[RMDB]
RNA sequence: GGGAACGACUCGAGUAGAGUCGAAAAGCGUUCCAGUGCUGAUGAGGUGGUUUCUGCCGCUGUGGAAAUAACAGGACUUGGUGAGGAAGGAUCCCAUCGCCGGGGAUGGGGAAAAGCAGCUGGAUCGACGUAUGGUAGCUUUCGAGCUACCAUACGUAAAAGAAACAACAACAACAAC
Reactivity to 2A3 in 0.01 (KOAc 150mM, MgCl2 10mM, bicine 150mM(pH8.5), 24C), signal-to-noise 3, nucleotides 027 to 126: g020c010g000u010u010c000c020a010g060u040g060c020u050g010a160u060g020a020g080g070u170g010g080u040u040u070c080u110g010c000c020g030c000u000g030u040g020g110a080a110a110u140a070a030c030a010g020g080a070c050u080u190g030g000u090g090a090g010g020a050a030g020g060a080u110c030c020c000a020u030c010g090c100c080g000g100g000g000a030u020g000g000g020g080a000a150a020a060g010c010a000g020c020u030g000g030a030u050c050g030
Reactivity to DMS in 0.01 (KOAc 150mM, MgCl2 10mM, bicine 150mM(pH8.5), 24C), signal-to-noise 3, nucleotides 027 to 126: g030c010g020u000u000c000c020a080g000u000g020c040u020g000a110u000g000a140g000g010u000g010g000u000u010u020c020u000g010c040c030g020c020u000g010u000g020g010a070a120a100u030a190a040c070a080g000g000a150c070u030u010g000g010u010g000a080g000g000a070a070g000g000a180u030c010c000c000a050u000c020g040c090c040g020g000g000g000a070u010g000g010g000g000a090a030a100a070g020c040a040g000c010u010g030g010a090u010c080g010